RNA sequence: GGGAACGACUCGAGUAGAGUCGAAAACUUGAACCAGGAGGUGGAGGUUGCAGUGAGCUGAGAUCAUCCCACUGCACUCCAGCCUGGGCAACACAGUGAGAUACUGUCUCAAAGAAAAAAAAAAUGUGUGAUACAGUUUGGAUUUGUGUCCCUACCAUCGAAAAUCAUAGUUCGCUAUGAUUUUCGAAAAAGAAACAACAACAACAAC
Reactivity to 2A3 in 0.01 (KOAc 150mM, MgCl2 10mM, bicine 150mM(pH8.5), 24C), signal-to-noise 3, nucleotides 027 to 156: c020u040u090g060a050a090c000c010a020g010g020a060g120g180u040g020g030a020g080g050u220u130g000c010a000g000u010g030a120g030c100u090g080a050g050a300u240c040a080u040c020c030c000a000c000u010g000c000a010c000u010c010c010a000g030c010c000u000g000g010g010c010a040a030c010a000c010a030g040u030g070a050g000a030u070a090c040u050g050u030c030u030c060a060a130a070g220a100a090a050a010a010a010a000a010a050a080u140g080u030g020u030g010a040u040a040c040a020g010u020u040u070g070g010a080u030u070u040g010u030g010u000c000c000c000u060a060c010c050a030
Reactivity to DMS in 0.01 (KOAc 150mM, MgCl2 10mM, bicine 150mM(pH8.5), 24C), signal-to-noise 2, nucleotides 027 to 156: c080u010u000g030a090a130c000c020a010g020g000a090g020g040u010g010g010a060g020g020u000u000g050c010a030g020u020g000a060g010c080u000g020a180g020a220u000c060a060u010c040c000c010a040c000u000g000c000a090c020u000c030c010a090g030c050c000u030g020g010g040c040a090a040c040a030c030a030g010u010g000a240g010a160u000a150c080u010g010u000c030u000c030a070a120a140g060a020a030a000a000a000a050a200a170a120a150u010g020u000g010u010g000a130u000a050c080a040g000u000u000u000g030g020a230u000u010u000g020u000g040u010c030c000c000u000a120c100c110a250
Structure probing data (2A3 and DMS) for a 207-nucleotide construct. The data come from the RNA Mapping Database (RMDB), library OK3TST. Conditions: 150 mM KOAc, 10 mM MgCl2 and 150 mM bicine (pH 8.5), 24 C. For DMS the reverse transcriptase was MarathonRT. Reactivities are given for positions 27 through 156. For 2A3 the reverse transcriptase was SuperScript II with manganese.